Overview: An RNA of 207 nucleotides, treated with 2A3 and read out base by base. Reactivities are given for positions 27 through 156. It was measured as part of the RMDB library RNAMAK. The RNA was probed in 150 mM KOAc, 10 mM MgCl2 and 150 mM bicine (pH 8.5) at 24 C.
RNA sequence: GGGAACGACUCGAGUAGAGUCGAAAAGGCGUAACUGUUCGCAGUUACGCCAAAAAUCCUAAGUCCCAAAUGCGUGAACUACCAUCGAUCUAUCGGAAACGAUAGGGAGGCACGCUAUGGGAUAUGGAAAAAAGUGUGUGACUUCGGUCACACACAACUGCCUGAUAAACUUCGGUUUAUCAGGCAGAAAAGAAACAACAACAACAAC
Reactivity to 2A3 in 0.01 (KOAc 150mM, MgCl2 10mM, bicine 150mM(pH8.5), 24C), signal-to-noise 1, nucleotides 027 to 156: g000g000c000g010u010a000a010c000u040g020u100u120c140g000c110a000g010u000u000a000c010g000c000c000a020a010a000a000a050u000c010c000u010a060a030g030u030c010c000c000a020a020a020u220g010c000g000u020g070a140a160c120u060a170c020c030a160u300c080g090a080u060c010u050a050u050c050g110g080a180a060a120c030g010a020u020a050g000g030g000a020g010g020c000a000c000g000c000u000a020u000g000g000g000a020u000a010u030g000g000a050a030a070a090a120a130g000u020g000u000g000u000g010a010c000u030u080c300g140g000u000c000a000c000a000c000a000c000a000a000